This 170-nucleotide RNA was probed chemically with 2A3. The RNA was probed in 150 mM KOAc, 10 mM MgCl2 and 150 mM bicine (pH 8.5) at 24 C. Values are in units of 0.01, from 0 to 300, in steps of 10. 2A3 adducts were read by reverse transcription with SuperScript II with manganese.
RNA sequence: GGGAACGACUCGAGUAGAGUCGAAAAUUGAAGGUAAAACAGCCUGUGGGUGAAACACACCCACAGGGCCCAUUGGGCGCUAGCACUCUGGUAUCACGGUACCUUUGUGCGCCUGUUUUACGGAAGGCAGCGGGACCCUUCGGGGUCCCGAAAAGAAACAACAACAACAAC
Reactivity to 2A3 in 0.01 (KOAc 150mM, MgCl2 10mM, bicine 150mM(pH8.5), 24C), signal-to-noise 1, nucleotides 027 to 129: u060u100g110a050a010g150g000u000a000a000a000a000c020a010g000c000c000u020g000u000g000g030g000u000g080a010a100a030c140a010c000a010c070c000c010a000c000a000g000g000g000c030c000c000a000u180u300g030g000g000c000g000c080u120a140g000c000a000c010u000c010u020g000g000u020a030u000c010a120c180g130g000u000a000c010c000u000u000u010g000u000g000c020g000c000c000u000g000u000u000u010u010a000c000g000g000a030a000g120g050c000a000g050